[RMDB]
RNA sequence: GGGAACGACUCGAGUAGAGUCGAAAACAGCGGCGCAGCCUGGCAGAGACGCUCCAGCAGGAAGGGAGUGAGAACGGCCACGGCGUGGUGUUCCCGGCUGAACUGGUGCGGCUGCUGGACAGGCUGGGCUCCUCCAAGGGUUCGCCCUUGGAGGAGCAAAAGAAACAACAACAACAAC
Reactivity to 2A3 in 0.01 (KOAc 150mM, MgCl2 10mM, bicine 150mM(pH8.5), 24C), signal-to-noise 3, nucleotides 027 to 126: c010a030g110c070g150g000c120g000c080a010g010c000c010u000g000g020c000a020g000a000g000a020c000g000c000u000c000c000a050g010c020a010g030g080a090a090g030g040g000a030g020u140g060a150g080a130a060c070g100g020c000c020a030c050g300g020c120g020u000g000g020u030g020u060u020c000c000c000g020g030c010u010g000a200a080c000u010g000g040u030g010c000g020g010c000u220g250c000u020g030g060a080c000a020g000g000c000u000g000g050
Reactivity to DMS in 0.01 (KOAc 150mM, MgCl2 10mM, bicine 150mM(pH8.5), 24C), signal-to-noise 3, nucleotides 027 to 126: c070a140g020c170g000g000c050g000c010a030g010c000c010u000g020g000c000a010g000a080g000a030c010g000c010u000c010c000a000g000c060a230g000g000a110a140g020g000g000a050g030u010g010a100g000a100a080c120g020g000c000c010a020c050g020g020c200g030u010g010g000u000g020u000u000c000c000c000g010g020c020u000g000a130a160c000u000g000g000u000g010c010g000g000c010u010g020c000u000g000g000a120c030a020g010g020c010u000g010g020